[RMDB]
An RNA of 207 nucleotides, treated with 2A3 and DMS and read out base by base. For DMS the reverse transcriptase was MarathonRT. The DMS profile rests on 2,681 reads. For 2A3 the reverse transcriptase was SuperScript II with manganese. The data come from the RNA Mapping Database (RMDB), library M2RFPK.
RNA sequence: GGGAACGACUCGAGUAGAGUCGAAAAUUGCUCAGGCAGCGUAACGCUGCUUGAAAGACCACAUGAAAGUCCUGGCGGGUUAAGCGCCGCCAGGCGGGGUUCGGAGGCGCCUGGCAACAGAGGCCUCAUUACAUGGAAGACUUCGGUCUUCCAUGAACAUUACCUAUUUGUUCGCAAAUAGGUAAUGAAAAGAAACAACAACAACAAC
Reactivity to 2A3 in 0.01 (KOAc 150mM, MgCl2 10mM, bicine 150mM(pH8.5), 24C), signal-to-noise 2, nucleotides 027 to 156: u050u070g050c020u000c000a020g000g030c010a010g000c040g040u160a130a050c230g020c000u000g020c000u000u000g010a010a010a010g060a010c020c020a040c080a150u260g110a160a010a010g300u010c000c000u000g000g000c010g010g000g080u080u080a140a050g060c100g050c030c000g030c000c010a000g000g000c010g000g000g010g000u070u300c150g070g000a020g020g040c010g240c030c030u000g200g010c000a080a000c000a000g070a040g040g030c000c000u010c000a010u010u070a040c010a000u010g000g000a000a000g010a000c000u040u100c300g040g020u000c000u000u000c000c000a010u000g000a000a000
Reactivity to DMS in 0.01 (KOAc 150mM, MgCl2 10mM, bicine 150mM(pH8.5), 24C), signal-to-noise 1, nucleotides 027 to 156: u000u010g020c060u000c000a050g000g010c010a010g010c000g030u000a140a120c140g070c030u000g030c020u020u010g010a050a110a130g020a190c000c030a070c100a120u000g000a110a110a140g030u000c000c020u000g000g010c000g000g010g000u000u000a120a230g000c300g040c000c010g050c000c030a000g010g020c040g000g000g000g030u000u010c060g010g000a030g010g000c030g000c010c000u000g000g000c180a110a100c000a060g000a060g000g050c000c010u030c040a010u000u000a150c010a020u000g010g000a020a020g010a040c040u000u010c260g080g000u030c000u000u010c000c010a000u000g000a060a160